[RMDB]
RNA sequence: GGGAACGACUCGAGUAGAGUCGAAAAGAUAUGGAUCCCUCGCGAUAAGCUGUGUGUCGGAAACGACACCAGCUUUUGACGCGACCAUCCUAAGUCAAACAACAAAGUGGUUCGCCACUUUGUUGAAGGGAAAUUGUAAGUUCGCUUACAAUUUCCCAAAAGAAACAACAACAACAAC
Reactivity to 2A3 in 0.01 (KOAc 150mM, MgCl2 10mM, bicine 150mM(pH8.5), 24C), signal-to-noise 2, nucleotides 027 to 126: g010a060u070a020u150g010g030a020u030c050c000c000u020c000g010c010g030a070u040a180a020g000c040u030g220u020g000u010g000u210c020g000g040a070a080a070c010g020a020c010a000c000c000a010g000c000u020u000u000u020g020a010c000g020c020g010a000c050c010a060u060c000c010u080a090a030g080u130c030a110a110a140c010a090a020c000a010a020a010g010u020g030g060u090u140c300g090c130c000a000c000u010u010u020g000u010u000g000a020a030
Reactivity to DMS in 0.01 (KOAc 150mM, MgCl2 10mM, bicine 150mM(pH8.5), 24C), signal-to-noise 3, nucleotides 027 to 126: g000a040u010a240u010g000g000a020u000c040c040c110u000c010g030c000g010a160u010a010a030g010c010u010g000u010g030u000g000u000c010g000g000a110a060a170c000g010a020c000a000c000c010a010g000c000u000u000u000u000g010a160c070g020c000g010a000c080c080a070u010c010c000u010a090a130g010u010c040a090a130a280c010a000a000c000a000a000a010g030u010g000g000u010u020c280g020c000c000a010c000u000u000u000g000u000u000g000a080a080

The record gives the reactivity of an RNA of 177 nucleotides to 2A3 and DMS. The DMS profile rests on 2,728 reads. For 2A3, 3,363 sequencing reads were counted. Conditions: 150 mM KOAc, 10 mM MgCl2 and 150 mM bicine (pH 8.5), 24 C. For DMS the reverse transcriptase was MarathonRT.